Chemical mapping of a 177-nucleotide RNA with DMS and 2A3. Conditions: 150 mM KOAc, 10 mM MgCl2 and 150 mM bicine (pH 8.5), 24 C. Reactivities are given for positions 27 through 126. For 2A3, 3,947 sequencing reads were counted. The DMS profile rests on 6,131 reads. The data come from the RNA Mapping Database (RMDB), library OK1LIB.

RNA sequence: GGGAACGACUCGAGUAGAGUCGAAAAUCACGGUGAAAAGAAAACCGUGUAAUGUGCAAGAAUCGAAAUACCGAACCGAUUAUCUAUGACGGUGAAAGGUUCAUAGAUUCAUCGUAGCACAUGGAAAGGGAAUGAUAUACUUCGGUAUAUCAUUCCCAAAAGAAACAACAACAACAAC
Reactivity to DMS in 0.01 (KOAc 150mM, MgCl2 10mM, bicine 150mM(pH8.5), 24C), signal-to-noise 5, nucleotides 027 to 126: u010c000a010c020g000g010u000g030a060a060a140a180g040a130a060a180a030c000c010g060u010g020u030a040a010u010g040u000g020c000a300a100g020a010a010u000c020g000a090a070a110u030a140c300c100g010a000a020c000c000g000a300u000u000a010u000c000u000a130u050g000a050c160g010g000u000g000a010a030a250g000g010u000u020c020a060u010a050g000a030u010u000c040a130u030c140g000u030a190g000c000a000c000a000u000g010g030a050a040a150
Reactivity to 2A3 in 0.01 (KOAc 150mM, MgCl2 10mM, bicine 150mM(pH8.5), 24C), signal-to-noise 5, nucleotides 027 to 126: u080c000a000c000g010g000u050g080a150a130a080a060g170a010a090a040a000c000c000g000u000g000u020a040a010u030g010u000g000c040a100a160g010a080a040u040c050g030a090a080a080u170a170c110c020g000a030a010c000c000g040a070u090u000a030u050c060u030a190u270g100a070c060g000g050u070g040a080a030a020g060g000u030u000c020a030u060a040g030a030u020u000c030a000u100c090g070u080a050g020c000a000c000a030u080g040g110a080a100a050